[RMDB]
RNA sequence: GGGAACGACUCGAGUAGAGUCGAAAAGGUUGGCAUAGCAUGAUACCUUACAUGUGGUAGCUAUAGGCAUUAUGUUACUUUUAUGCCAGCAUGUGAAUGUAAACAUCAUUUCAGUAAAAAUAUUUUUCCAUUUCUGCUUACUACUAGAACUAUGAGGCAUUUUCUUCCUAUUCGUAGGAAGAAAAUGAAAAGAAACAACAACAACAAC
Reactivity to DMS in 0.01 (KOAc 150mM, MgCl2 10mM, bicine 150mM(pH8.5), 24C), signal-to-noise 2, nucleotides 027 to 156: g010g040u010u010g020g000c000a100u010a100g010c030a040u000g020a060u000a000c000c020u000u000a110c090a110u000g040u000g000g000u000a070g030c050u000a190u000a060g010g000c000a020u000u000a010u010g020u000u000a090c130u000u020u010u000a050u010g040c000c000a080g000c030a090u010g020u010g010a050a050u010g000u000a080a070a100c070a080u000c050a080u000u000u010c040a080g020u000a010a080a050a100a100u010a090u000u000u000u000u000c060c030a140u000u000u000c060u000g010c040u000u000a050c040u000a070c040u010a100g000a040a080c030u000a120u000g000a110g020g030
Reactivity to 2A3 in 0.01 (KOAc 150mM, MgCl2 10mM, bicine 150mM(pH8.5), 24C), signal-to-noise 7, nucleotides 027 to 156: g060g000u020u010g000g000c000a020u020a020g010c010a000u010g010a040u070a100c020c030u070u070a060c050a130u140g050u080g100g080u100a060g030c040u080a040u120a150g040g000c020a020u020u030a010u080g040u060u060a090c040u120u170u070u020a010u020g000c000c000a010g000c020a030u110g050u050g090a050a020u040g000u100a100a120a110c030a080u150c020a030u070u110u070c040a030g090u210a010a070a050a080a060u100a150u070u110u010u040u040c020c000a030u040u090u090c050u030g050c020u070u060a040c030u020a020c010u040a070g040a200a030c030u040a090u190g020a090g060g040

An RNA of 207 nucleotides, treated with DMS and 2A3 and read out base by base. As a SHAPE reagent, 2A3 marks flexible, mostly unpaired nucleotides at the ribose 2'-OH. The reactions ran in a buffer of 150 mM KOAc, 10 mM MgCl2 and 150 mM bicine (pH 8.5), at 24 C. It was measured as part of the RMDB library OK3TST.